[RMDB]
RNA sequence: GGGAACGACUCGAGUAGAGUCGAAAAAAAGAAAGCAACGGGGCUAGCUGCCGGGUGUUCCAUCCAUGGGAUCGGUGCCGAGUGAGGCUUAUCCCGGGGGGAUUGCCUCGGCCCCCUCCCUAACACGCAAGCUACCGGUUCGCCGGUAGCAAAAGAAACAACAACAACAAC
Reactivity to DMS in 0.01 (KOAc 150mM, MgCl2 10mM, bicine 150mM(pH8.5), 24C), signal-to-noise 3, nucleotides 027 to 129: a100a040a090g000a060a050a110g060c080a100a110c140g000g000g000g000c090u030a090g030c020u040g050c040c060g000g000g000u020g030u020u020c020c060a070u040c110c100a130u030g050g000g000a070u020c150g000g050u030g020c060c020g010a080g000u060g000a100g030g020c020u040u050a030u010c000c000c000g000g000g000g000g000g000a020u010u070g010c020c020u020c030g040g000c110c060c010c000c030u030c020c000c010u000a050a110c000a060c120g030c100a130a080
Reactivity to 2A3 in 0.01 (KOAc 150mM, MgCl2 10mM, bicine 150mM(pH8.5), 24C), signal-to-noise 2, nucleotides 027 to 129: a020a000a010g180a000a050a010g030c010a030a030c030g010g000g040g030c010u060a030g000c030u050g020c000c000g000g000g000u050g010u060u030c000c000a070u060c000c030a120u160g000g000g010a000u030c090g080g040u070g040c000c010g030a030g030u260g050a020g050g000c020u040u040a040u030c030c010c010g010g000g000g000g000g010a040u040u100g010c000c000u080c010g010g000c030c000c000c000c000u020c000c030c000u010a050a040c080a000c060g050c030a030a040